About this RNA
This 177-nucleotide RNA was probed chemically with 2A3 and DMS. 2A3 adducts were read by reverse transcription with SuperScript II with manganese. The RNA was probed in 150 mM KOAc, 10 mM MgCl2 and 150 mM bicine (pH 8.5) at 24 C. It was measured as part of the RMDB library TTRINS. The 2A3 profile rests on 6,189 reads. For DMS the reverse transcriptase was MarathonRT.

[RMDB]
RNA sequence: GGGAACGACUCGAGUAGAGUCGAAAAGAUAUGGAUUCAGUCUCACUACCCACCGUAUGGCUCGUUGAAACAGAUCGGAAACGAUCUGUGGAGAGUGGCCAUACGAGGUGAGACUGAAUCCUAAGUCCUUACAAUGAUGCUUCGGCAUCAUUGUAAGAAAAGAAACAACAACAACAAC
Reactivity to 2A3 in 0.01 (KOAc 150mM, MgCl2 10mM, bicine 150mM(pH8.5), 24C), signal-to-noise 2, nucleotides 027 to 126: g090a060u180a080u280g010g020a000u000u000c010a000g000u000c010u000c000a020c010u180a190c060c130c090a040c080c020g010u010a000u000g010g000c030u040c170g300u060u030g020a000a070a000c000a000g020a010u010c010g020g050a070a060a120c000g000a000u000c000u020g000u010g000g000a070g010a020g060u270g060g000c030c000a000u000a000c000g000a000g000g000u000g000a010g000a010c000u010g000a000a000u000c000c000u000a030a010g030u030c000
Reactivity to DMS in 0.01 (KOAc 150mM, MgCl2 10mM, bicine 150mM(pH8.5), 24C), signal-to-noise 3, nucleotides 027 to 126: g010a130u000a300u010g010g010a010u000u010c000a020g020u000c010u000c010a000c020u000a020c060c050c090a300c100c030g000u000a000u000g000g010c000u000c270g000u000u000g000a300a250a010c020a020g040a010u000c000g020g020a130a080a210c000g000a000u000c010u000g000u000g000g010a300g010a040g010u010g030g030c010c000a020u000a010c000g010a020g030g010u000g010a030g020a020c000u020g000a000a000u000c000c000u000a050a150g010u000c060